[RMDB]
RNA sequence: GGGAACGACUCGAGUAGAGUCGAAAAAGCAUCAGGUCACUACGGUGACCUGAUGCAACUGAUGCAUAACUAUGAAUAUGAUUUCUGAUUAAAUUGUUCAUAAAUACCAUCUUUCGGGACUGACAAAAAAGUGUCUGAAAUUCGUUUCAGACACUUUAAAAGAAACAACAACAACAAC
Reactivity to DMS in 0.01 (KOAc 150mM, MgCl2 10mM, bicine 150mM(pH8.5), 24C), signal-to-noise 4, nucleotides 027 to 126: a100g020c000a000u020c020a010g030g000u000c000a010c000u000a170c150g040g000u010g020a030c010c010u010g010a010u000g010c010a010a030c050u020g000a060u010g000c140a050u020a100a110c150u000a010u000g000a020a050u010a050u020g020a070u000u010u030c170u030g000a090u000u000a030a030a080u010u010g030u000u000c010a020u010a010a070a140u000a140c300c010a010u010c020u010u010u010c070g010g000g000a260c090u010g020a040c100a000a060a080
Reactivity to 2A3 in 0.01 (KOAc 150mM, MgCl2 10mM, bicine 150mM(pH8.5), 24C), signal-to-noise 3, nucleotides 027 to 126: a000g000c000a000u020c000a010g010g000u010c000a000c010u040a020c300g150g020u000g000a000c030c000u020g000a000u000g000c020a010a000c020u040g000a000u060g010c010a040u050a080a040c020u050a030u030g020a040a020u110a090u120g150a140u030u170u080c120u080g140a160u090u290a070a110a060u140u090g020u000u020c000a010u010a030a050a020u090a020c010c020a050u030c000u080u080u100c030g110g010g080a120c040u090g000a040c140a060a040a000

An RNA of 177 nucleotides, treated with DMS and 2A3 and read out base by base. For 2A3 the reverse transcriptase was SuperScript II with manganese. The 2A3 profile rests on 1,306 reads. The reactions ran in a buffer of 150 mM KOAc, 10 mM MgCl2 and 150 mM bicine (pH 8.5), at 24 C.